[RMDB]
RNA sequence: GGGAACGACUCGAGUAGAGUCGAAAAGGGUAGACGAUUAGUCCAGGUGGAGCUAUGUUCUUGGUCUAGCACUUUCUCCUAUAGGGAUACAUCUCUUAAUGCUUGUUAUACAUACUUUACCACAUUCAACUACGAUCUCUUUCGAGAGAUCGUAGUUAAAAGAAACAACAACAACAAC
Reactivity to 2A3 in 0.01 (KOAc 150mM, MgCl2 10mM, bicine 150mM(pH8.5), 24C), signal-to-noise 2, nucleotides 027 to 126: g020g030g030u070a010g010a050c050g030a120u140u130a030g060u020c060c020a060g010g110u060g030g050a070g050c040u050a040u090g080u060u090c020u110u080g110g010u020c040u010a020g050c030a030c100u080u080u000c060u040c040c020u120a080u090a170g000g010g000a020u030a110c040a170u010c000u000c000u060u040a120a010u130g040c050u110u090g050u070u170a090u010a140c040a040u080a070c020u130u030u000a090c010c050a000c010a100u120u150c040
Reactivity to DMS in 0.01 (KOAc 150mM, MgCl2 10mM, bicine 150mM(pH8.5), 24C), signal-to-noise 4, nucleotides 027 to 126: g020g010g060u000a050g000a040c060g000a120u000u010a060g010u000c030c060a100g020g020u000g010g000a120g010c080u010a040u000g010u010u000c110u010u000g020g010u010c040u010a050g000c080a100c070u000u000u000c070u010c020c040u010a130u010a080g010g000g000a060u010a070c170a060u000c030u010c020u000u000a040a060u010g020c050u000u000g010u000u000a100u020a060c060a050u000a040c080u000u000u000a100c020c010a080c150a120u000u020c150